[RMDB]
RNA sequence: GGGAACGACUCGAGUAGAGUCGAAAAUCAGCUAAUAUUUUAGGAUAAUCUUUACCUUCUUUAGAGUUUCUCUUCCAUAAUUUAUGAUGGGGUAUCAUUGAUCCUAAAUCAUAGGUGAAACGUGAAAUAUUCUAGCCGCAUUCGUGCGGCUAGAAUAAAAAGAAACAACAACAACAAC
Reactivity to 2A3 in 0.01 (KOAc 150mM, MgCl2 10mM, bicine 150mM(pH8.5), 24C), signal-to-noise 2, nucleotides 027 to 126: u050c010a000g180c020u070a220a040u020a230u170u170u140u060a000g000g000a020u040a070a020u140c120u010u040u100a110c020c000u120u100c050u010u300u250a060g000a060g060u000u230u060c070u020c000u190u120c050c010a090u130a190a220u260u290u150a200u100g020a020u070g000g070g000g000u050a000u030c020a010u000u200g210a030u000c000c000u000a040a040a040u010c050a000u010a020g190g000u020g030a020a120a000c040g080u030g050a040a170a000